This 177-nucleotide RNA was probed chemically with DMS and 2A3.
The reactions ran in a buffer of 150 mM KOAc, 10 mM MgCl2 and 150 mM bicine (pH 8.5), at 24 C.

RNA sequence: GGGAACGACUCGAGUAGAGUCGAAAAGACUUUUAUAGCCCACCACAUUGUGUGACAGAAGAUAAUCGAAAUAACCCACCUGAUUGUGCUAAUGCUUAUCAUUAUCACUUAGGAGGUAUAGAGGGACCAUACUGGCGUCAUUCGUGACGCCAGUAUGAAAAGAAACAACAACAACAAC
Reactivity to DMS in 0.01 (KOAc 150mM, MgCl2 10mM, bicine 150mM(pH8.5), 24C), signal-to-noise 3, nucleotides 027 to 126: g000a050c060u000u020u060u010a060u030a160g010c020c000c000a120c090c080a080c060a180u050u000g020u060g000u030g000a080c160a010g000a180a040g000a110u020a000a070u070c010g000a070a110a080u000a070a150c070c000c020a070c030c010u000g010a050u040u040g010u000g030c120u020a000a000u010g000c300u050u060a070u080c000a030u000u010a020u000c000a000c020u000u010a020g000g000a210g010g010u000a040u010a060g000a200g010g010g000a080c170
Reactivity to 2A3 in 0.01 (KOAc 150mM, MgCl2 10mM, bicine 150mM(pH8.5), 24C), signal-to-noise 3, nucleotides 027 to 126: g040a020c040u060u090u080u130a170u170a070g020c030c010c000a000c000c010a050c010a090u130u290g030u020g020u010g140a080c040a070g130a060a000g020a050u090a140a080u170c040g010a020a000a100u070a030a040c000c000c010a170c030c030u040g030a120u080u110g020u000g000c010u000a000a000u030g050c050u090u160a070u300c000a000u000u000a010u040c000a030c000u030u060a000g000g020a020g040g060u020a000u060a070g120a050g010g000g010a000c020
Source: RMDB library OK1LIB, as collected in RNAgym. 2A3 is a SHAPE reagent: it acylates the 2'-hydroxyl of flexible nucleotides of all four kinds.